[RMDB]
RNA sequence: GGGAACGACUCGAGUAGAGUCGAAAAUGCUACCGCUUGCGUGUCCUACAUGGGGCACAUUGACGACGGCACAAUCUUGCACGACGGCGACCCGGGGCACCGUGCCGCCGUCGAGUCAGCGGCAACCAAAGUUAGCGAGGUUCGCCUCGCUAACUUUAAAAGAAACAACAACAACAAC
Reactivity to 2A3 in 0.01 (KOAc 150mM, MgCl2 10mM, bicine 150mM(pH8.5), 24C), signal-to-noise 1, nucleotides 027 to 126: u040g000c030u080a010c010c020g000c060u080u120g120c010g000u010g000u000c020c030u120a300c100a300u300g000g000g000g020c010a010c000a070u030u130g040a010c040g020a010c030g040g090c020a000c010a050a240u090c090u160u100g010c040a020c070g070a030c010g140g020c060g030a050c090c010c080g000g000g020g000c110a050c130c020g000u000g010c000c000g000c000c000g000u000c000g000a000g020u040c070a010g040c000g060g000c030a010a050c020c050
Reactivity to DMS in 0.01 (KOAc 150mM, MgCl2 10mM, bicine 150mM(pH8.5), 24C), signal-to-noise 2, nucleotides 027 to 126: u010g000c050u020a060c010c020g000c040u010u020g040c160g000u000g000u010c000c010u000a160c300a130u010g030g010g000g010c000a010c000a050u000u000g010a100c040g040a080c060g000g030c070a020c070a110a080u020c100u000u010g020c040a200c020g000a030c070g000g000c030g000a030c040c010c000g000g000g010g030c300a030c120c070g000u010g020c010c030g010c000c010g030u010c000g000a030g010u000c070a010g010c030g000g000c060a040a100c030c100
Chemical mapping of a 177-nucleotide RNA with 2A3 and DMS. The RNA was probed in 150 mM KOAc, 10 mM MgCl2 and 150 mM bicine (pH 8.5) at 24 C. For 2A3, 1,108 sequencing reads were counted. DMS adducts were read by reverse transcription with MarathonRT. For 2A3 the reverse transcriptase was SuperScript II with manganese.